[RMDB]
RNA sequence: GGGAACGACUCGAGUAGAGUCGAAAAGAAAGAAAGAAAGAACACAGAGUUAUACUGGAGAUAUGGAAGAGCUGUGUUGGGUAUAAGUAACAGGCUUUUCUUUAUCUUCUAUGUGGCUCUUUGCAAAUAGAGUUACUUUUUUCGAAAAGUAACUCUAAAAAGAAACAACAACAACAAC
Reactivity to DMS in 0.01 (KOAc 150mM, MgCl2 10mM, bicine 150mM(pH8.5), 24C), signal-to-noise 2, nucleotides 027 to 126: g010a110a100a100g010a090a040a080g000a070a020a070g010a110a140c020a030c090a010g010a020g010u020u000a020u010a060c100u010g000g010a010g010a010u000a000u010g010g000a010a000g000a000g010c000u010g000u030g020u000u000g010g020g000u040a090u000a090a160g010u060a000a020c030a300g000g000c010u000u000u000u000c000u010u000u000a010u000c000u000u000c000u000a050u010g020u000g020g000c010u000c000u010u010u020g010c140a040a080a120
Reactivity to 2A3 in 0.01 (KOAc 150mM, MgCl2 10mM, bicine 150mM(pH8.5), 24C), signal-to-noise 4, nucleotides 027 to 126: g130a030a060a010g080a040a080a010g110a040a130a010g110a110a000c020a000c010a020g000a000g020u060u040a080u010a090c040u040g010g010a000g000a000u010a010u020g030g010a000a000g000a010g020c010u040g060u010g010u270u040g090g020g060u220a200u070a230a080g150u070a020a000c000a010g040g000c000u000u010u000u010c000u000u000u000a000u000c000u040u010c010u020a010u100g000u010g000g010c000u000c000u040u040u040g020c040a090a040a010